[RMDB]
RNA sequence: GGGAACGACUCGAGUAGAGUCGAAAAGAUAUGGACGGAGCUACCCACCUAUUCGCGAUAUGACCCGAAUGUUGUUCGGAAACGAACAACGAUUCGCAUAUCGCGAAUAGAGGCUCCGUCCUAAGUCGAUAAAAGUUACCUUCGGGUAACUUUUAUCAAAAGAAACAACAACAACAAC
Reactivity to 2A3 in 0.01 (KOAc 150mM, MgCl2 10mM, bicine 150mM(pH8.5), 24C), signal-to-noise 2, nucleotides 027 to 126: g150a080u300a180u300g000g010a000c000g010g020a000g000c000u180a300c000c000c030a030c020c010u000a010u020u000c030g000c010g000a000u000a000u030g140a250c130c100c080g020a000a000u000g030u000u020g000u020u010c010g000g030a140a060a050c000g000a010a000c000a010a000c020g030a050u010u030c010g010c020a000u010a010u000c000g020c000g000a000a000u010a000g020a010g010g020c000u000c000c010g000u000c000c000u010a010a000g020u030c060
Reactivity to DMS in 0.01 (KOAc 150mM, MgCl2 10mM, bicine 150mM(pH8.5), 24C), signal-to-noise 3, nucleotides 027 to 126: g010a170u020a150u010g010g010a000c010g020g000a030g010c000u000a160c000c000c000a300c060c000u000a000u000u000c000g040c000g010a040u000a000u000g000a110c300c280c090g000a000a000u000g010u000u000g010u000u000c000g000g000a080a060a250c000g000a000a000c020a010a010c000g000a030u000u000c000g000c000a000u000a000u000c000g000c020g000a000a000u000a000g000a090g020g000c010u000c000c000g000u000c000c000u000a010a070g030u000c130